RNA sequence: GGGAACGACUCGAGUAGAGUCGAAAACGUGGAAGCAACCAGUCCUUCUUCUACAGUCCGUAUGCGCAGCUCGAUGGCUCCAUGUACGGCACUUGCUGCCUUCAACUUCAAGGAACUGGUGGUGGUGAUCAGUCAUAGUGUUCGCACUAUGACUGAUAAAAGAAACAACAACAACAAC
Reactivity to DMS in 0.01 (KOAc 150mM, MgCl2 10mM, bicine 150mM(pH8.5), 24C), signal-to-noise 6, nucleotides 027 to 126: c120g020u010g010g010a080a110g010c200a130a050c020c020a040g000u000c040c050u000u010c080u000u000c080u000a060c140a060g000u000c110c080g010u010a020u000g010c160g030c100a020g010c010u000c120g010a130u010g010g010c020u000c080c070a070u010g010u010a080c190g010g010c080a050c020u010u000g020c040u010g000c020c010u000u020c080a080a070c100u000u010c100a030a030g020g010a060a040c030u000g000g010u000g000g040u010g010g010u000g010
Reactivity to 2A3 in 0.01 (KOAc 150mM, MgCl2 10mM, bicine 150mM(pH8.5), 24C), signal-to-noise 4, nucleotides 027 to 126: c040g020u130g070g050a080a000g030c040a040a070c010c000a000g020u010c040c000u020u090c000u090u010c020u070a100c060a050g020u030c080c070g050u140a050u040g050c100g000c020a020g010c010u040c080g240a250u180g150g000c030u010c050c040a090u170g090u160a070c080g000g010c010a000c010u020u050g000c010u020g010c010c000u040u050c020a100a080c030u120u100c050a030a010g110g000a210a130c010u020g010g000u000g010g050u050g000g100u090g050